[RMDB]
RNA sequence: GGGAACGACUCGAGUAGAGUCGAAAAGCCCUAGCCCGGUCUUCGAAGCUUCCUUUGGCUACUACCCGGUGGAAACAACUGAAGCUUCAACGCCUUUUUUUCCUAUCUUCUUUAGCACCGGGCUAGGCCUGUGUUUAAAGUUCGCUUUAAACACAGGAAAAGAAACAACAACAACAAC
Reactivity to 2A3 in 0.01 (KOAc 150mM, MgCl2 10mM, bicine 150mM(pH8.5), 24C), signal-to-noise 2, nucleotides 027 to 126: g010c000c010c000u010a000g010c000c000c000g060g030u030c060u170u150c280g010a000a010g000c000u040u010c000c000u000u000u010g050g020c000u010a020c010u080a100c020c030c020g050g000u020g010g060a170a300a170c010a010a000c020u020g000a010a000g010c000u000u000c010a020a020c060g040c020c010u040u060u050u010u040u060u120c020c030u060a180u150c060u210u050c010u100u280u070a050g020c060a010c020c000g010g000g000c010u000a010g000g000
Reactivity to DMS in 0.01 (KOAc 150mM, MgCl2 10mM, bicine 150mM(pH8.5), 24C), signal-to-noise 2, nucleotides 027 to 126: g010c150c000c000u000a020g000c000c010c030g000g000u000c080u010u000c130g000a020a030g020c010u010u000c000c040u000u000u000g000g010c030u000a060c020u000a120c040c030c040g000g000u000g000g000a100a110a140c030a020a030c030u000g000a040a010g000c010u000u000c010a100a140c180g000c020c010u000u000u010u000u000u010u000c020c000u000a060u000c100u010u010c060u010u010u000a070g020c110a050c000c000g000g000g010c000u000a000g000g000